[RMDB]
RNA sequence: GGGAACGACUCGAGUAGAGUCGAAAACUUUUCUUAAUAAGCACUUUUCUAUGAUGAUACUGUCUGAUGACGGUGUCGUUUGCUAUAAUAGUGAUUAUGCAGCUAAGGGUUACAUUGCUGGAAUACAUGAUCAGCCUGUUCGCAGGCUGAAAAAGAAACAACAACAACAAC
Reactivity to 2A3 in 0.01 (KOAc 150mM, MgCl2 10mM, bicine 150mM(pH8.5), 24C), signal-to-noise 3, nucleotides 027 to 129: c000u070u050u060u020c050u060u200a140a080u010a030a000g000c000a020c020u120u050u060u000c040u050a010u180g040a000u030g000a000u010a000c020u000g040u010c000u170g060a100u260g000a060c000g000g000u010g000u030c010g000u010u010u040g060c020u010a000u100a160a040u050a080g010u000g060a000u050u050a010u050g030c010a020g000c030u080a040a130g040g010g070u180u070a030c010a040u100u250g040c060u000g000g000a010a030u200a100c010a050u030g000a040
Reactivity to DMS in 0.01 (KOAc 150mM, MgCl2 10mM, bicine 150mM(pH8.5), 24C), signal-to-noise 3, nucleotides 027 to 129: c060u020u000u010u080c040u020u020a080a010u010a090a080g040c030a040c060u070u000u010u010c110u050a040u080g030a030u010g030a040u000a040c010u020g020u030c020u050g000a180u120g030a030c010g000g040u020g060u040c000g020u010u050u030g030c000u040a060u040a040a100u000a050g020u020g010a030u000u030a020u020g000c070a070g030c100u040a070a010g010g010g040u000u000a060c110a100u000u000g040c030u050g070g020a000a000u050a120c120a070u050g020a130
Chemical mapping of a 170-nucleotide RNA with 2A3 and DMS. Source: RMDB library 15KLIB, as collected in RNAgym. The reactions ran in a buffer of 150 mM KOAc, 10 mM MgCl2 and 150 mM bicine (pH 8.5), at 24 C.